RNA sequence: GGGAACGACUCGAGUAGAGUCGAAAAGAAUUGGUAUGUAAGCUACCUCUUCCGGUAGCUGCGUCACACUUUAAGAGUGUGCAUACUGAGCCGAAGCUCAGCUUCGGUCCCCCAAGGGAAGGCCAAACGAGGCCACGGAUUUCGAUCCGUGGCCUCGAAAAGAAACAACAACAACAAC
Reactivity to 2A3 in 0.01 (KOAc 150mM, MgCl2 10mM, bicine 150mM(pH8.5), 24C), signal-to-noise 1, nucleotides 027 to 126: g070a050a030u040u040g000g000u000a000u000g000u000a010a010g000c000u000a000c000c010u070c000u040u000c000c000g030g000u000a000g000c000u000g010c000g000u000c000a000c000a030c000u100u080u240a300a110g280a030g200u000g000u000g000c000a000u030a050c000u000g000a000g040c010c010g010a000a000g030c060u130c300a000g010c000u000u000c040g000g000u020c020c000c010c000c000a040a060g080g010g030a000a000g040g010c040c050a030a090a090